[RMDB]
RNA sequence: GGGAACGACUCGAGUAGAGUCGAAAACGCUGGGAAUUAGUGGUAGUGGUCUAUGACAUGCUGAUACUGAAGCGCGCACGGUAUUCAGCAACAGCAUAGACCACUACGUAACAUCUAAUUCCUGUGCUGAAGCGCGCACGGCAACCGAAAGGUGCGAGCGCGCAGUUUACUUCGGUAAACUGCGCGCAAAAGAAACAACAACAACAAC
Reactivity to DMS in 0.01 (KOAc 150mM, MgCl2 10mM, bicine 150mM(pH8.5), 24C), signal-to-noise 1, nucleotides 027 to 156: c080g040c030u000g110g080g000a060a010u000u000a030g000u010g020g040u010a010g030u000g010g020u010c000u000a010u000g010a110c040a280u000g010c000u010g010a080u000a040c010u030g000a000a030g030c030g020c060g060c000a300c030g030g050u000a000u010u000c040a000g070c000a010a050c050a180g060c050a010u030a000g010a010c000c000a000c000u000a010c000g030u000a080a140c060a090u000c000u000a010a060u000u010c000c010u010g010u000g010c010u010g050a050a060g000c010g000c010g000c010a090c000g000g000c040a110a090c010c030g000a050a130a190g020g000u000g030c030g030a160
Reactivity to 2A3 in 0.01 (KOAc 150mM, MgCl2 10mM, bicine 150mM(pH8.5), 24C), signal-to-noise 3, nucleotides 027 to 156: c040g000c040u040g000g010g060a000a000u000u020a030g020u050g160g000u000a000g000u000g000g000u000c010u010a000u000g060a150c070a200u240g000c000u000g000a000u000a010c000u010g100a210a100g020c040g000c010g010c030a040c030g010g000u060a070u180u270c000a000g020c030a050a060c060a080g180c000a000u000a000g000a000c000c000a000c000u000a000c000g000u040a010a000c010a030u030c000u000a000a000u000u020c000c010u040g020u030g000c020u080g030a130a020g010c000g020c000g010c020a030c020g090g000c030a140a090c010c010g060a190a020a000g030g000u030g000c010g050a020